[RMDB]
RNA sequence: GGGAACGACUCGAGUAGAGUCGAAAAGCUGGACAAGAUGCCACGCGGGAUUGUGGCACGUUCCAAUCUCAAUGGCUCAACGGCCGGCAUCGGUGCCGCCGUCAUGGUGGAUCUUGUGGCCGUGCCGCCGAGAAUCCUGAUUCGUCAGGAUUCUCGGAAAAGAAACAACAACAACAAC
Reactivity to DMS in 0.01 (KOAc 150mM, MgCl2 10mM, bicine 150mM(pH8.5), 24C), signal-to-noise 2, nucleotides 027 to 126: g000c220u020g000g010a030c070a110a090g020a180u000g020c000c000a020c030g020c200g020g010g020a140u010u000g000u010g010g010c030a050c050g010u010u040c000c000a050a120u000c000u010c020a160a070u010g010g020c060u010c060a200a140c040g000g000c000c010g040g010c040a060u000c120g000g010u000g000c000c000g040c000c000g000u030c220a050u010g010g030u000g000g000a060u000c050u030u000g010u000g000g000c040c020g010u020g010c060c050g010
Reactivity to 2A3 in 0.01 (KOAc 150mM, MgCl2 10mM, bicine 150mM(pH8.5), 24C), signal-to-noise 3, nucleotides 027 to 126: g000c050u060g020g000a000c030a110a070g070a280u060g000c020c000a010c050g030c070g090g120g090a130u060u210g000u100g010g000c010a020c060g000u110u000c030c000a050a050u000c010u030c000a080a150u160g030g000c020u030c150a050a030c020g010g020c070c000g030g010c000a020u100c080g090g070u130g240c020c000g040c000c000g210u250c100a160u290g000g030u020g010g010a020u040c010u000u100g030u120g060g050c000c000g000u040g000c010c010g000